[RMDB]
RNA sequence: GGGAACGACUCGAGUAGAGUCGAAAAGUAUGGAUGCCACCGUGACGCCUCAAUCACACAAGUGCCAACGAUAACGAGGCGCUCGCUAUUGCUGCGUAACUGACGGCCUGACGGUCUGACGUUACAAAAAACGAAAAGUGGUUCGCCACUUUUCGAACAAAAUUCAAGUCUUCGGACUUGAAUUUUGAAAAGAAACAACAACAACAAC
Reactivity to 2A3 in 0.01 (KOAc 150mM, MgCl2 10mM, bicine 150mM(pH8.5), 24C), signal-to-noise 3, nucleotides 027 to 156: g140u080a110u200g060g030a070u110g030c010c040a080c040c050g040u030g020a040c000g000c000c010u020c000a030a060u070c010a070c010a040c030a170a140g090u060g150c070c030a100a070c140g050a070u070a100a060c090g000a020g010g010c000g000c010u010c000g010c050u060a050u130u270g040c060u040g000c020g030u000a000a000c000u000g010a000c010g010g030c010c030u140g140a080c140g000g000u000c010u000g020a010c010g010u010u010a010c000a000a050a000a010a000a000c000g000a010a010a000a000g020u010g010g000u040u070c130g050c060c010a020c000u000u010u000u010c000g000a020a000
Reactivity to DMS in 0.01 (KOAc 150mM, MgCl2 10mM, bicine 150mM(pH8.5), 24C), signal-to-noise 2, nucleotides 027 to 156: g010u000a080u000g010g010a080u010g010c010c040a130c090c050g000u000g000a080c030g010c020c050u000c010a130a160u040c040a100c050a110c030a080a090g030u000g000c080c010a090a210c080g000a160u000a080a100c030g000a060g040g000c030g060c020u010c020g010c010u000a050u000u000g000c040u000g000c020g060u000a010a020c040u000g000a300c300g010g000c000c010u050g020a160c270g020g020u010c000u010g010a300c240g000u010u000a020c010a030a050a020a050a090a120c000g000a000a030a010a010g010u010g010g010u000u010c250g040c020c000a010c000u010u000u000u000c000g020a070a140